[RMDB]
RNA sequence: GGGAACGACUCGAGUAGAGUCGAAAAGAUAUGGACCCAUGUGGUCUCAACAGCUAGGAUCGGAAACGAUCCUAGACAUGAGGACACAUCGGGUCCUAAGUCAAAGAUCGCUCUUCGGAGCGAUCAAUCAGAGGAAUUCCUUCGGGAAUUCCUCUGAAAAAGAAACAACAACAACAAC
Reactivity to DMS in 0.01 (KOAc 150mM, MgCl2 10mM, bicine 150mM(pH8.5), 24C), signal-to-noise 1, nucleotides 027 to 126: g000a100u000a300u000g000g000a000c000c000c000a070u000g000u000g000g050u020c000u000c000a050a050c300a180g000c000u000a000g010g000a000u040c010g010g000a140a130a300c000g010a000u000c000c000u020a000g010a020c050a110u000g000a010g020g040a020c000a000c000a090u000c210g020g000g000u000c000c000u040a010a120g010u000c030a160a060a160g000a000u000c000g000c000u000c050u000u000c260g020g050a030g010c020g010a000u000c000a010a100